The record gives the reactivity of an RNA of 177 nucleotides to 2A3 and DMS. As a SHAPE reagent, 2A3 marks flexible, mostly unpaired nucleotides at the ribose 2'-OH. In probing experiments dimethyl sulfate is read out at A N1 and C N3, which are open when not base-paired.

RNA sequence: GGGAACGACUCGAGUAGAGUCGAAAAUGACUUUAUAUUUUACAUGCAUGCAUGUGUGUUCAUGAUGGGGAGAGAAAGGAAUGUUCGCAUUUGGGUUAGUACCAAGCAUGGUGUGGGUAACUGCUGUAAACAAUCCGUUUUUCGAAACGGAUUGUUUAAAAGAAACAACAACAACAAC
Reactivity to 2A3 in 0.01 (KOAc 150mM, MgCl2 10mM, bicine 150mM(pH8.5), 24C), signal-to-noise 8, nucleotides 027 to 126: u090g020a010c040u100u200u060a120u080a090u150u160u060u100a050c030a020u050g060c020a020u080g030c020a060u050g020u010g010u000g030u060u050c020a020u080g090a060u080g020g000g030g010a040g010a010g040a050a060a010g070g050a050a030u060g030u050u040c050g000c050a040u020u040u080g040g000g000u040u060a030g010u040a060c010c020a030a010g040c020a020u070g000g030u050g030u050g040g020g000u020a040a030c030u040g020c010u040g040u090
Reactivity to DMS in 0.01 (KOAc 150mM, MgCl2 10mM, bicine 150mM(pH8.5), 24C), signal-to-noise 5, nucleotides 027 to 126: u020g000a090c080u000u010u010a080u020a070u020u010u010u010a080c050a030u010g010c050a060u010g000c080a040u000g000u010g010u010g000u000u010c070a060u010g010a090u000g010g010g000g000a080g000a060g010a060a080a100g000g020a070a050u010g010u020u000c090g010c050a080u010u010u010g000g010g010u000u000a110g010u030a100c070c040a050a080g000c060a080u010g010g020u010g010u000g000g000g010u020a050a090c090u010g000c070u000g000u020